Chemical mapping of a 207-nucleotide RNA with 2A3. For 2A3 the reverse transcriptase was SuperScript II with manganese.
RNA sequence: GGGAACGACUCGAGUAGAGUCGAAAAGGGACGCCUUUAGCAGAAGAGGCUAGGUGGUAUUCCGGUGUGGGAUACUUGGUAAUAUGUAACGCUAAUUGCAUAAGAUUGUAGGACGGAAUUUACAGUCAAAACGGUCCUGCGUUCGCGCAGGACCGAAGAUCAACUACGACUUCGGUCGUAGUUGAUCAAAAGAAACAACAACAACAAC
Reactivity to 2A3 in 0.01 (KOAc 150mM, MgCl2 10mM, bicine 150mM(pH8.5), 24C), signal-to-noise 1, nucleotides 027 to 156: g060g000g040a020c090g050c120c010u070u060u120a010g000c050a010g010a130a000g010a040g020g000c000u010a040g060g030u030g020g000u060a050u160u040c010c100g030g050u190g000u120g070g030g000a090u030a110c070u100u150g060g020u160a070a050u040a110u180g050u030a030a030c020g000c120u090a120a000u120u050g010c010a030u000a150a040g010a090u050u070g020u000a010g000g110a020c070g020g000a030a010u000u090u000a070c030a090g000u030c000a040a000a000a120c000g000g020u000c000c000u000g000c000g010u070u020c190g000c010g000c140a000g000g000a000c000c000g000a000a000
The reactions ran in a buffer of 150 mM KOAc, 10 mM MgCl2 and 150 mM bicine (pH 8.5), at 24 C.